Chemical mapping of a 177-nucleotide RNA with 2A3 and DMS. DMS adducts were read by reverse transcription with MarathonRT.

[RMDB]
RNA sequence: GGGAACGACUCGAGUAGAGUCGAAAACAGUGUGGCAAGGAAUUCGAGUGCGUCGUACAACUCGGGCGCCGUGACCAUCACCUGCGCAUUGGCGCGGCACUGAGCCUCCAAGAUGCCUUCUCCGCCCUGUUAUUCGCCUGUUCGCAGGCGAAUAACAAAAAGAAACAACAACAACAAC
Reactivity to 2A3 in 0.01 (KOAc 150mM, MgCl2 10mM, bicine 150mM(pH8.5), 24C), signal-to-noise 1, nucleotides 027 to 126: c000a030g050u050g020u080g210g000c090a150a070g080g030a080a110u110u070c020g030a020g070u150g000c040g100u090c060g080u130a040c050a120a050c070u030c060g050g000g010c150g020c000c000g000u010g050a250c010c000a020u100c000a080c070c050u150g010c060g000c020a070u020u070g040g040c030g010c000g000g000c010a000c070u050g040a020g020c000c050u150c040c010a020a040g030a060u030g000c000c000u020u000c000u000c000c020g030c030c010c000
Reactivity to DMS in 0.01 (KOAc 150mM, MgCl2 10mM, bicine 150mM(pH8.5), 24C), signal-to-noise 2, nucleotides 027 to 126: c090a130g070u020g030u010g020g000c260a070a120g010g010a080a100u000u000c140g020a100g000u020g010c010g010u000c070g010u000a130c190a080a090c060u000c010g000g000g000c230g030c020c000g000u000g000a190c000c000a020u020c070a150c100c030u000g030c090g020c070a210u020u010g000g000c000g010c020g000g030c070a050c060u000g000a040g000c050c040u000c090c080a160a190g000a020u000g000c000c020u010u000c170u000c000c040g000c000c020c040